The record gives the reactivity of an RNA of 207 nucleotides to 2A3 and DMS. It was measured as part of the RMDB library OK3TST. For 2A3, 1,968 sequencing reads were counted. For DMS the reverse transcriptase was MarathonRT.
RNA sequence: GGGAACGACUCGAGUAGAGUCGAAAAAGGACGGGUCUAUCCUCAUUUCUGACCGUCGACAAAACGUACACAUCUAACUCUCCAUUAAAAGGGGGCUCUAGAGGGUGGCCCAUUUUCAACGUGGAUGUUUCAUCACACGUGGCGGAGCCUCACAUGAGCAUACGUGGAAAUUCGUUUCCACGUAUGCAAAAGAAACAACAACAACAAC
Reactivity to 2A3 in 0.01 (KOAc 150mM, MgCl2 10mM, bicine 150mM(pH8.5), 24C), signal-to-noise 4, nucleotides 027 to 156: a000g140g020a020c060g060g000g060u020c060u110a070u070c030c020u040c060a090u080u170u080c100u080g060a050c030c000g050u030c030g040a030c060a010a080a030a010c080g050u110a050c080a020c010a070u010c020u090a200a300c010u020c010u050c040c020a180u210u250a080a100a070a090g020g000g000g000g000c010u010c000u030a040g010a010g010g110g010u030g020g040c000c000c030a050u130u110u110u210c110a080a050c020g010u020g000g000a010u030g180u130u200u230c050a020u030c010a000c010a010c220g020u010g000g020c040g010g010a000g010c000c020u070c020a130c030a060u180g050a030
Reactivity to DMS in 0.01 (KOAc 150mM, MgCl2 10mM, bicine 150mM(pH8.5), 24C), signal-to-noise 1, nucleotides 027 to 156: a090g060g000a020c000g010g030g020u000c030u000a080u010c000c040u010c070a300u010u000u000c100u000g010a070c000c040g000u010c000g010a150c070a030a040a120a100c050g000u000a100c070a090c100a110u010c040u000a060a050c070u000c000u010c020c040a170u000u010a090a070a210a110g000g000g030g100g010c000u000c050u000a060g010a080g050g040g020u000g040g000c020c020c000a110u010u000u000u020c060a020a050c000g000u000g000g040a080u000g010u000u010u000c040a090u000c000a040c000a010c000g010u000g010g030c070g000g000a090g040c000c030u000c000a070c070a070u000g000a300